[RMDB]
RNA sequence: GGGAACGACUCGAGUAGAGUCGAAAAGCUUAGGCGAAAUUCGUUUCGCCUAAGCCCAGUGAUAUGGAUCUUCUAAGGCGAGGAUCUCGGAAACGAGGGAGCCUCGUAGACUGGAUCCUAAGUCGGUGUGAUUGGUGAGGUUCGCCUCACCAAUCAAACCAACACCAACUUUCGAGUUGGUGUUGGUAAAAGAAACAACAACAACAAC
Reactivity to DMS in 0.01 (KOAc 150mM, MgCl2 10mM, bicine 150mM(pH8.5), 24C), signal-to-noise 1, nucleotides 027 to 156: g000c000u010u000a010g000g020c000g010a000a000a050u000u010c180g030u000u020u000c010g020c000c000u000a010a010g000c000c000c010a060g040u010g020a180u000a160u000g030g010a030u000c020u010u000c050u010a060a150g040g030c030g010a030g000g000a070u000c030u000c030g000g020a200a190a300c140g010a150g010g000g020a130g020c010c010u000c030g070u010a140g000a130c090u010g010g020a050u010c000c000u000a080a230g000u000c000g060g030u010g000u010g000a050u000u010g000g000u000g040a060g000g000u000u000c300g000c000c000u010c000a000c020c000a000a000u010c030a020a100
Reactivity to 2A3 in 0.01 (KOAc 150mM, MgCl2 10mM, bicine 150mM(pH8.5), 24C), signal-to-noise 2, nucleotides 027 to 156: g000c000u000u000a000g000g000c000g010a010a060a110u150u130c180g090u050u000u000c000g000c000c000u000a000a000g000c000c000c000a120g120u150g040a040u030a080u190g000g010a000u010c020u100u030c070u200a150a090g130g010c010g000a030g010g000a060u020c020u010c010g000g060a130a140a060c050g010a080g040g050g050a110g090c000c010u000c030g000u010a010g010a030c070u060g060g000a000u000c000c000u040a140a040g050u040c070g000g100u110g010u020g060a020u000u000g000g020u020g000a000g030g080u030u170c240g140c050c010u000c000a000c010c000a000a000u010c000a010a000